Annotation:
Conditions: 150 mM KOAc, 10 mM MgCl2 and 150 mM bicine (pH 8.5), 24 C. Chemical mapping of a 177-nucleotide RNA with 2A3 and DMS. The data come from the RNA Mapping Database (RMDB), library OK2TRN. High DMS reactivity at an A or C suggests that its Watson-Crick edge is free.
RNA sequence: GGGAACGACUCGAGUAGAGUCGAAAAUAGCGCCAGUACAGGCCCAGGCCAGGCCGUACCGAUCCGGCCGUCGGCCGAUCAGUACUGACGCACUCGGAUCUGUAGACUGUAUGCUGGCGCGAGUACGUCAAUAGGUAUAGUUCGCUAUACCUAUUGAAAAAGAAACAACAACAACAAC
Reactivity to 2A3 in 0.01 (KOAc 150mM, MgCl2 10mM, bicine 150mM(pH8.5), 24C), signal-to-noise 9, nucleotides 027 to 126: u120a020g000c000g000c000c000a000g010u010a000c010a020g040g030c030c020c010a000g010g000c000c000a000g010g000c000c010g000u010a010c000c020g000a010u110c160c100g010g010c020c030g250u150c110g010g010c000c000g000a010u010c010a000g000u010a010c020u100g090a100c070g020c020a230c020u060c090g230g050a300u020c010u010g030u030a050g050a130c000u010g010u070a060u180g080c010u010g000g000c000g000c010g000a020g040u090a060c080g040
Reactivity to DMS in 0.01 (KOAc 150mM, MgCl2 10mM, bicine 150mM(pH8.5), 24C), signal-to-noise 9, nucleotides 027 to 126: u010a170g010c010g020c000c000a020g020u000a030c020a050g000g000c030c100c020a030g000g010c010c010a070g000g020c010c030g000u000a050c020c030g000a020u000c110c070g040g010c030c010g010u010c190g030g030c010c000g000a020u000c020a030g010u000a010c010u010g030a080c170g010c040a100c040u000c130g020g000a070u010c000u000g010u010a080g000a060c010u000g000u000a100u010g020c040u000g000g010c010g010c000g000a080g010u010a090c200g010